[RMDB]
RNA sequence: GGGAACGACUCGAGUAGAGUCGAAAAUGAGACAAACACGCUUCACAAUGUGCGGCAAAGAAACAUUGUUUAUGCAAAGGCACUUCUCAAUGUGUGCUCAAACAUUGCUUAUUCAAACACGCUUCACAAAAGAAUCAGUGGUUCGCCACUGAUUCAAGAUUAUGACUGUCUUCGGACAGUCAUAAUCAAAAGAAACAACAACAACAAC
Reactivity to 2A3 in 0.01 (KOAc 150mM, MgCl2 10mM, bicine 150mM(pH8.5), 24C), signal-to-noise 9, nucleotides 027 to 156: u150g010a030g040a040c060a020a140a010c080a020c050g010c010u020u010c010a010c000a020a030u030g000u010g010c000g030g050c070a090a110a070g060a020a050a010c010a010u010u000g060u030u060u080a080u100g010c030a020a060a060g040g000c010a010c010u170u070c070u060c110a100a160u150g030u010g020u020g050c020u050c090a070a110a040c040a070u040u060g010c020u080u110a100u150u170c060a040a110a040c060a030c130g100c060u130u110c070a050c040a110a090a020a040g010a000a000u000c000a000g000u000g010g030u040u030c140g040c050c000a000c000u000g000a000u000u000c000a000a000
Reactivity to DMS in 0.01 (KOAc 150mM, MgCl2 10mM, bicine 150mM(pH8.5), 24C), signal-to-noise 3, nucleotides 027 to 156: u000g010a140g010a160c110a110a100a090c090a030c000g000c030u000u000c050a050c020a030a020u010g080u000g020c010g000g000c050a090a080a110g080a080a020a040c010a030u010u010g030u000u000u000a070u000g020c030a060a160a110g000g010c030a020c010u000u000c130u000c130a110a100u010g050u000g000u000g000c020u000c020a050a130a040c040a060u000u000g010c030u010u000a110u010u000c070a160a120a140c130a100c090g000c000u000u000c030a110c120a080a080a090a230g000a020a010u000c010a010g030u000g000g020u000u010c300g020c020c000a000c000u010g010a010u000u000c000a000a040
Description
The record gives the reactivity of an RNA of 207 nucleotides to 2A3 and DMS. Source: RMDB library M2RFPK, as collected in RNAgym. 2A3 adducts were read by reverse transcription with SuperScript II with manganese. Conditions: 150 mM KOAc, 10 mM MgCl2 and 150 mM bicine (pH 8.5), 24 C.